[RMDB]
Structure probing data (2A3) for a 177-nucleotide construct.
RNA sequence: GGGAACGACUCGAGUAGAGUCGAAAACUGAUACCCCUUGGAGCUGAGGCAGACUUGGUGCCUACACAGGGUGGAAAGUGGGAUACUAGUGACAGUGGGUAAGGUCUCUGGGGUCUCUGAUAUGUGGCGUAAGUACGGGCUUCGGCCCGUACUUACGAAAAGAAACAACAACAACAAC
Reactivity to 2A3 in 0.01 (KOAc 150mM, MgCl2 10mM, bicine 150mM(pH8.5), 24C), signal-to-noise 2, nucleotides 027 to 126: c010u000g040a010u160a050c010c000c000c050u070u120g090g040a050g050c050u000g050a020g020g010c020a130g000a270c110u170u200g190g080u140g020c020c020u000a000c170a010c010a080g010g060g000u120g030g040a150a040a000g010u220g050g000g000a010u230a170c050u120a030g070u000g300a060c000a050g060u040g080g000g000u070a070a060g050g010u000c040u000c030u060g000g000g000g060u000c000u000c000u000g020a040u060a090u190g100u090g070g030
The RNA was probed in 150 mM KOAc, 10 mM MgCl2 and 150 mM bicine (pH 8.5) at 24 C.
Source: RMDB library OK1LIB, as collected in RNAgym.